[RMDB]
RNA sequence: GGGAACGACUCGAGUAGAGUCGAAAACAACUGUUAUCUUGCCACUGCAUUGUUAACACUCCAACAAAUAGAGUUGAAGUUUAAUCCGCCUGCUCUACAAAGGGCUGGUGAAGCUGCUAACUUUUGUCUAAUGAAACUAGUUCGCUAGUUUCAUUAGAAAAGAAACAACAACAACAAC
Reactivity to DMS in 0.01 (KOAc 150mM, MgCl2 10mM, bicine 150mM(pH8.5), 24C), signal-to-noise 3, nucleotides 027 to 126: c050a090a120c170u000g010u010u010a060u010c010u000u000g020c010c150a060c100u000g020c060a060u010u010g000u010u000a010a040c090a060c040u000c010c030a050a020c090a050a110a130u010a080g000a070g000u000u000g010a100a040g000u000u000u000a060a050u010c120c040g000c040c000u000g000c040u000c010u000a130c300a100a150a100g000g000g010c030u010g040g010u000g000a060a060g000c040u000g000c070u010a050a060c060u000u000u000u000g000u000
Reactivity to 2A3 in 0.01 (KOAc 150mM, MgCl2 10mM, bicine 150mM(pH8.5), 24C), signal-to-noise 2, nucleotides 027 to 126: c000a000a020c080u040g020u120u090a080u060c030u040u070g000c030c040a110c080u140g000c020a040u010u090g040u090u040a040a020c020a000c050u000c030c010a000a030c020a050a190a140u200a040g060a000g030u040u060g020a010a010g000u000u050u120a030a030u050c000c000g010c000c000u020g020c010u010c000u060a090c080a050a200a050g000g010g030c040u010g000g030u030g020a010a010g010c030u060g030c020u010a020a050c000u030u070u110u140g060u030

Structure probing data (DMS and 2A3) for a 177-nucleotide construct. Reactivities are given for positions 27 through 126. The RNA was probed in 150 mM KOAc, 10 mM MgCl2 and 150 mM bicine (pH 8.5) at 24 C.